Structure probing data (DMS) for a 177-nucleotide construct.
[RMDB]
RNA sequence: GGGAACGACUCGAGUAGAGUCGAAAAGAUAUGGAGGAUAUAUGUAAUCCCUAUAUUGUCAGGAACUAGAUCGGAAACGAUCUAUUUCCUUGGAUUUAUAUAGAACUUACAUAUAUCCUCCUAAGUCCUACACCUAUGUGUUCGCACAUAGGUGUAGAAAAGAAACAACAACAACAAC
Reactivity to DMS in 0.01 (KOAc 150mM, MgCl2 10mM, bicine 150mM(pH8.5), 24C), signal-to-noise 2, nucleotides 027 to 126: g000a100u010a280u020g000g030a030g000g000a010u000a000u000a000u000g000u000a010a000u020c210c220c020u000a000u010a020u000u000g010u000c010a030g000g000a040a000c150u000a000g000a010u000c000g000g000a110a130a260c000g010a000u000c000u000a000u000u000u000c010c000u020u010g010g020a010u020u010u000a000u000a010u000a010g020a130a160c290u010u000a010c000a010u000a010u000a000u000c000c000u000c000c000u000a010a070g010u000c030

DMS adducts were read by reverse transcription with MarathonRT. For DMS, 2,583 sequencing reads were counted. It was measured as part of the RMDB library TTRINS.